[RMDB]
RNA sequence: GGGAACGACUCGAGUAGAGUCGAAAAGUCAGCGAAGACGAAGAGUGGCUGGAUGGCUAUCACGUGUUAGAGGGUCAGCGUGGCUACGGAGAGCGCUAUGGCGUAUUACGCACCAUGGCCGAUGAACAUGAAUUAGGUAAUUCGUUACCUAAUUCAUAAAAGAAACAACAACAACAAC
Reactivity to 2A3 in 0.01 (KOAc 150mM, MgCl2 10mM, bicine 150mM(pH8.5), 24C), signal-to-noise 9, nucleotides 027 to 126: g030u020c020a010g040c070g130a110a030g060a050c040g020a060a020g090a020g070u060g020g020c020u030g050g060a100u070g050g000c020u040a030u170c040a030c110g090u100g050u130u080a060g020a070g070g030g010u030c020a010g010c050g070u060g030g000c010u020a020c040g050g030a070g000a010g060c100g000c020u010a020u040g010g000c010g000u040a150u170u260a070c090g000c010a020c020c010a010u020g020g000c020c020g050a090u130g050a040a030c050
Reactivity to DMS in 0.01 (KOAc 150mM, MgCl2 10mM, bicine 150mM(pH8.5), 24C), signal-to-noise 9, nucleotides 027 to 126: g010u010c030a070g020c090g010a110a090g010a060c060g010a090a090g010a110g020u000g010g010c040u000g010g010a100u000g000g010c040u000a080u010c060a080c120g010u010g010u000u000a090g010a100g010g010g010u000c040a060g010c060g020u000g010g000c040u000a060c080g010g000a120g010a120g010c130g010c020u000a020u000g010g010c030g020u000a090u010u010a100c190g010c030a050c020c010a030u000g000g010c010c040g000a080u010g010a090a100c220
Source: RMDB library OK2TRN, as collected in RNAgym. This 177-nucleotide RNA was probed chemically with 2A3 and DMS. The reactions ran in a buffer of 150 mM KOAc, 10 mM MgCl2 and 150 mM bicine (pH 8.5), at 24 C. In probing experiments dimethyl sulfate is read out at A N1 and C N3, which are open when not base-paired.